[RMDB]
RNA sequence: GGGAACGACUCGAGUAGAGUCGAAAAUACAAAGAGGUUGAGGCGCAUGGUUGGUUUUGGCUAAGCCGUAUUCGCGGUACAGUUCAAUUUGCAGAUAUUGGCGCUGAAAAUUGGCGUGCAGUUCGCAGUACACAUGACUUGGCCAACUGUCAAGCGACCUUCACAUGCAGUUCGCUGCAUGUGAAGGAAAAGAAACAACAACAACAAC
Reactivity to 2A3 in 0.01 (KOAc 150mM, MgCl2 10mM, bicine 150mM(pH8.5), 24C), signal-to-noise 4, nucleotides 027 to 156: u230a020c080a010a150a010g040a020g040g050u040u040g030a050g090g000c010g010c030a030u060g060g000u030u090g020g020u090u120u020u070g020g000c010u010a020a020g010c010c000g010u010a040u030u110c120g000c020g010g030u040a040c040a060g010u050u130c020a020a050u010u000u070g010c000a020g040a070u050a100u230u240g070g020c150g000c050u020g040a000a030a020a030u060u060g020g010c020g010u050g080c030a060g020u020u100c040g000c000a030g000u020a030c060a000c020a050u230g070a130c010u000u020g010g000c020c000a020a030c030u050g030u070c010a030a030g000c020g010a040

The record gives the reactivity of an RNA of 207 nucleotides to 2A3. Source: RMDB library OK3TST, as collected in RNAgym.